[RMDB]
RNA sequence: GGGAACGACUCGAGUAGAGUCGAAAAGAUCGUGACAUGGUGUCGGUGGUUCACGAUUUGCAAAAAGCGAUAGCUGAAAAAGUGCAGUUAAAACCGGGCACCAGCGUGGCAUUCUCCGGGCAGUUCGAUCGUAGGCCUAUUUCGAUAGGCCUACGAUAAAAGAAACAACAACAACAAC
Reactivity to 2A3 in 0.01 (KOAc 150mM, MgCl2 10mM, bicine 150mM(pH8.5), 24C), signal-to-noise 2, nucleotides 027 to 126: g010a050u040c010g050u060g030a060c030a130u050g000g020u000g050u020c050g040g110u140g020g070u040u050c080a050c030g010a010u100u000u070g090c060a000a200a000a000a000g000c030g090a150u300a070g000c000u120g050a140a040a040a040a040g090u050g000c030a000g000u070u040a040a000a020a000c070c050g010g000g010c000a000c000c000a000g000c000g040u110g020g000c000a050u080u000c000u000c000c000g000g000g000c000a080g050u040u190c020g020
Reactivity to DMS in 0.01 (KOAc 150mM, MgCl2 10mM, bicine 150mM(pH8.5), 24C), signal-to-noise 1, nucleotides 027 to 126: g010a000u000c050g060u000g000a040c230a070u000g010g000u000g070u000c000g080g010u000g000g080u000u010c090a000c110g000a010u000u010u020g050c060a100a030a070a140a010g000c040g000a090u000a090g010c000u000g000a070a080a070a080a070g000u000g020c000a070g020u020u010a010a110a110a080c030c000g050g000g000c000a030c010c020a020g000c020g020u010g000g000c080a140u000u000c030u000c020c020g040g010g000c130a110g000u000u000c020g030